[RMDB]
An RNA of 177 nucleotides, treated with 2A3 and DMS and read out base by base. It was measured as part of the RMDB library OK2TRN. For DMS, 1,354 sequencing reads were counted.
RNA sequence: GGGAACGACUCGAGUAGAGUCGAAAACACCAAGGAGGCUGGGGCCAAGAGGAUCGUGAGGGGUCGGGUAUAUUUUGGAAACAUCUUGCGUGUUAUGGGUUCUUGCACUUUUAGCACAGGCCUUGGGCACCUGCAAGGAGUUCGCUCCUUGCAGGUGAAAAGAAACAACAACAACAAC
Reactivity to 2A3 in 0.01 (KOAc 150mM, MgCl2 10mM, bicine 150mM(pH8.5), 24C), signal-to-noise 2, nucleotides 027 to 126: c040a010c010c010a010a010g010g050a010g050g060c160u050g000g010g050g050c050c010a050a030g050a040g050g040a070u130c110g040u120g070a050g000g040g000g080u070c030g020g000g100u050a130u040a060u190u170u080u140g010g050a070a060a040c000a090u030c010u120u250g020c100g030u030g010u070u080a070u100g050g000g020u180u060c030u060u090g060c040a060c050u090u030u150u160a010g000c010a020c020a060g000g060c000c000u030u010g000g000g000
Reactivity to DMS in 0.01 (KOAc 150mM, MgCl2 10mM, bicine 150mM(pH8.5), 24C), signal-to-noise 1, nucleotides 027 to 126: c080a180c020c020a070a090g020g030a070g010g000c150u000g020g020g040g000c060c030a030a110g000a080g010g000a080u000c100g030u000g020a130g000g010g000g020u010c070g010g000g020u000a110u000a110u000u020u020u000g020g000a100a100a100c080a020u000c050u000u020g000c110g000u010g010u000u010a070u000g010g010g000u000u010c100u000u000g010c080a040c110u000u000u000u000a060g000c010a060c090a100g000g000c010c000u000u000g000g020g020